RNA sequence: GGGAACGACUCGAGUAGAGUCGAAAACGCGGCCAACCCCGCUGAACUCUCCGGACUACGUCUGUACCAAUUCGACGAGUCGUCAGUGGUGCUCGCCGGUAAUAACGGCCCGACUAACGGAGAUGUCACAUUCCAUAUCCUUCGGGAUAUGGAAUGUAAAAGAAACAACAACAACAAC
Reactivity to 2A3 in 0.01 (KOAc 150mM, MgCl2 10mM, bicine 150mM(pH8.5), 24C), signal-to-noise 3, nucleotides 027 to 126: c030g010c010g030g000c050c010a040a050c010c010c000c010g010c050u050g030a080a030c020u000c000u000c030c010g000g070a070c050u180a110c110g010u000c030u110g040u040a070c020c050a110a220u130u130c060g000a010c020g020a060g200u100c040g020u000c020a010g040u020g050g010u030g010c010u030c070g000c000c000g000g010u070a080a050u150a110a030c010g000g020c000c020c040g030a030c030u030a050a010c010g010g010a010g000a040u130g070u040c010
Reactivity to DMS in 0.01 (KOAc 150mM, MgCl2 10mM, bicine 150mM(pH8.5), 24C), signal-to-noise 5, nucleotides 027 to 126: c120g020c030g020g020c040c050a080a190c100c180c000c020g030c050u010g000a070a060c080u000c000u000c000c000g000g000a160c140u000a090c130g000u000c010u020g010u000a140c060c060a050a140u010u000c160g010a010c000g010a120g020u000c050g020u010c030a080g010u000g010g020u000g000c030u000c230g010c000c000g000g020u000a080a080u010a100a170c030g000g000c030c280c080g000a020c050u010a090a130c010g000g010a020g010a030u010g010u010c110
Chemical mapping of a 177-nucleotide RNA with 2A3 and DMS. For 2A3 the reverse transcriptase was SuperScript II with manganese. For DMS, 5,007 sequencing reads were counted. The 2A3 profile rests on 4,753 reads. Reactivities are rounded to 0.1 and cut off at 0 and 3. The data come from the RNA Mapping Database (RMDB), library OK2TST.